RNA sequence: GGGAACGACUCGAGUAGAGUCGAAAAAGUAGGUGGCCGUACGCCAGCCAAUGGAAUAGUGCCCAAGGUGAUUGGCACCUUGCCAGUGAGAUUGCGGUGCGGACCGCUCACCUCGCACUCCACAUGCCCCAGGGUGGGCGUUCGCGCCCACCCUGGGAAAAGAAACAACAACAACAAC
Reactivity to 2A3 in 0.01 (KOAc 150mM, MgCl2 10mM, bicine 150mM(pH8.5), 24C), signal-to-noise 1, nucleotides 027 to 126: a000g300u300a100g000g000u000g000g000c000c000g020u000a000c030g000c000c000a000g000c000c000a110a040u030g000g090a000a030u140a300g020u110g000c000c100c110a070a140g080g000u080g070a210u020u050g000g110c000a010c000c040u070u100g030c070c000a250g000u140g100a110g010a300u000u300g000c060g080g020u150g070c040g000g030a000c000c000g000c000u060c000a000c000c030u000c030g000c000a060c030u000c040c010a010c000a080u230g000c000